[RMDB]
Chemical mapping of a 177-nucleotide RNA with DMS.
RNA sequence: GGGAACGACUCGAGUAGAGUCGAAAAAAGCCUCGCGAACGAUAUUCUUCCGGAUCGUUGCCAAGCUUCUGGCUGUCAUAAUUCGGCAGACCGGCGAUGCGCGUGUCGAAAAGCGUAAUGCCGGCAAACCCAGGCAGUAGUUCGCUACUGCCUGGGUAAAAGAAACAACAACAACAAC
Reactivity to DMS in 0.01 (KOAc 150mM, MgCl2 10mM, bicine 150mM(pH8.5), 24C), signal-to-noise 1, nucleotides 027 to 126: a160a080g020c030c020u000c260g010c050g020a030a020c040g000a020u010a010u020u010c040u000u000c060c070g000g020a050u000c010g000u010u000g000c020c020a120a160g010c080u030u010c100u000g000g010c000u000g010u000c050a110u010a190a230u000u010c210g000g010c100a000g000a250c060c020g000g000c010g020a060u000g010c030g010c000g020u000g020u010c170g000a140a060a060a120g010c000g000u030a070a160u010g000c030c000g020g010c220a030a040
The DMS profile rests on 623 reads.
Conditions: 150 mM KOAc, 10 mM MgCl2 and 150 mM bicine (pH 8.5), 24 C.
Reactivities are given for positions 27 through 126.
The data come from the RNA Mapping Database (RMDB), library OK2TST.